Description: An RNA of 207 nucleotides, treated with 2A3 and read out base by base.
RNA sequence: GGGAACGACUCGAGUAGAGUCGAAAAGAUCUCCGUGAUAGUGCAAUUCUGGAAUGAAUCAAGAGUUGACUUUUGGUGUUACUGAUGCUAAAUAGGCCUUGUAUUUGGGCCCCAAUUGGAGAAUGCCCCUGGAAUUCCACUCAGAUACAAGCUGCAGGUAAGAUGAAUCGUUCGCGAUUCAUCUUACAAAAGAAACAACAACAACAAC
Reactivity to 2A3 in 0.01 (KOAc 150mM, MgCl2 10mM, bicine 150mM(pH8.5), 24C), signal-to-noise 2, nucleotides 027 to 156: g050a090u040c020u000c010c010g090u120g030a070u170a160g100u170g050c070a090a040u060u030c040u050g060g120a160a150u140g030a040a070u160c070a060a020g050a010g060u030u020g090a070c010u130u040u040u030g020g000u010g030u070u040a040c030u110g090a140u070g040c020u020a050a080a070u070a120g050g030c000c020u000u000g040u020a060u010u060u020g000g010g000c000c000c020c050a110a230u070u120g000g020a030g050a020a110u080g030c020c000c000c000u030g030g100a130a130u150u000c030c000a030c020u000c000a000g010a060u020a070c000a000a050g100c030u110g010c030a090g130
Notes: Reactivities are given for positions 27 through 156. Source: RMDB library OK3TST, as collected in RNAgym. Conditions: 150 mM KOAc, 10 mM MgCl2 and 150 mM bicine (pH 8.5), 24 C.